Description:
This 177-nucleotide RNA was probed chemically with DMS. Conditions: 150 mM KOAc, 10 mM MgCl2 and 150 mM bicine (pH 8.5), 24 C. Values cover nucleotides 27 to 126.
RNA sequence: GGGAACGACUCGAGUAGAGUCGAAAAGUUACAGAUGCCAGUGAGCUUUUGUGGAGCAUGCUCUGUAGAUAGCAAAGGUGUGGGUCAGAUGUCAGCCCUGGGACUCUCUUUUUCCAGGGUGCGACUACCCACCGAUGCUAUUCGUAGCAUCGGUGGGAAAAGAAACAACAACAACAAC
Reactivity to DMS in 0.01 (KOAc 150mM, MgCl2 10mM, bicine 150mM(pH8.5), 24C), signal-to-noise 1, nucleotides 027 to 126: g030u000u030a050c040a000g010a050u010g010c030c050a060g020u000g030a080g000c010u000u020u020u030g000u010g030g000a090g020c070a060u010g000c030u000c030u000g010u010a110g000a110u010a040g000c040a030a060a270g010g000u000g000u030g000g000g010u000c220a120g000a030u040g010u010c020a300g000c010c000c000u000g010g000g010a050c300u000c270u040c070u010u000u000u000u000c010c000a020g000g030g000u000g000c140g000a010c000u000a120
For DMS the reverse transcriptase was MarathonRT.